[RMDB]
RNA sequence: GGGAACGACUCGAGUAGAGUCGAAAAGGAAGCGUUUACUUGGACCCCGAUUAAUGACGUCGGUUUAGCUCUAAUUCUUAGGUGGCCAAAGUAGAGUGUUACGUGCUGAUCAAAAGGUAACGGACAUUUGAUUCAUUGGUUAUCGACGAGGAAGGUACAAUCAUCCACAGUUCGCUGUGGAUGAUUGAAAAGAAACAACAACAACAAC
Reactivity to DMS in 0.01 (KOAc 150mM, MgCl2 10mM, bicine 150mM(pH8.5), 24C), signal-to-noise 3, nucleotides 027 to 156: g010g000a050a080g000c080g010u000u000u000a030c020u010u000g010g030a090c040c020c000c010g050a070u000u010a070a110u010g000a090c120g010u000c040g020g040u000u010u000a140g010c040u020c010u010a040a130u010u000c040u000u000a100g010g040u000g000g010c020c000a020a020a100g010u000a190g000a040g020u000g000u000u000a050c030g020u000g010c030u020g030a120u010c220a080a120a140a300g000g020u000a020a020c010g000g000a030c010a030u000u000u000g020a300u010u010c060a160u000u000g010g020u000u000a040u000c010g010a070c100g000a070g020g010a070a070g000g020u000a140
Reactivity to 2A3 in 0.01 (KOAc 150mM, MgCl2 10mM, bicine 150mM(pH8.5), 24C), signal-to-noise 5, nucleotides 027 to 156: g070g010a070a030g030c050g030u070u110u140a100c030u050u060g030g040a060c010c010c010c000g040a080u080u140a210a140u210g090a040c050g000u030c030g020g020u060u070u170a030g000c030u000c020u110a080a110u120u010c010u050u140a050g010g000u020g010g000c000c000a010a020a010g010u020a010g010a000g010u000g000u010u010a010c010g000u000g000c020u020g000a100u190c110a050a060a060a030g020g010u020a010a000c010g000g000a000c000a000u000u000u040g090a110u090u040c080a040u040u010g000g010u010u020a020u050c010g050a060c050g000a020g020g020a060a030g030g000u050a030